[RMDB]
Source: RMDB library M2PK50, as collected in RNAgym. An RNA of 177 nucleotides, treated with DMS and 2A3 and read out base by base. For 2A3 the reverse transcriptase was SuperScript II with manganese. For DMS, 1,486 sequencing reads were counted.
RNA sequence: GGGAACGACUCGAGUAGAGUCGAAAACCAACGUGGUUCGCCACGUUGGAAACAACAAAUACUGUCAGUUGAGACUGACACAAAAACUGUCAGUGUAGACAGAAAGGCGGUCCUUCGGGACCGCCAAGUUGAGUAUCAGGUUCGCCUGAUACUCAACAAAAGAAACAACAACAACAAC
Reactivity to DMS in 0.01 (KOAc 150mM, MgCl2 10mM, bicine 150mM(pH8.5), 24C), signal-to-noise 2, nucleotides 027 to 126: c000c000a000a010c020g000u000g000g010u020u010c170g020c000c000a010c010g000u020u000g010g020a060a050a040c050a170a070c100a090a090a090u000a090c120u020g010u000c010a060g000u000u000g000a270g020a070c000u000g000a010c010a010c170a010a040a060a080a110c210u000g020u000c000a080g000u000g000u000a130g010a010c020a000g010a060a070a080g000g010c000g020g020u010c000c010u000u000c130g030g010g000a000c000c000g000c010c000a000a020
Reactivity to 2A3 in 0.01 (KOAc 150mM, MgCl2 10mM, bicine 150mM(pH8.5), 24C), signal-to-noise 3, nucleotides 027 to 126: c000c000a000a000c000g000u010g000g030u050u040c180g040c080c000a000c000g000u000u010g000g010a030a040a020c030a020a010c020a010a150a050u210a170c030u040g000u010c020a070g020u030u090g160a060g060a090c000u000g020a000c010a010c010a020a190a030a020a060c020u010g000u010c000a020g100u020g050u170a030g010a010c010a010g050a090a060a000g000g000c020g000g000u000c000c010u060u110c150g050g000g000a000c010c000g000c000c010a000a000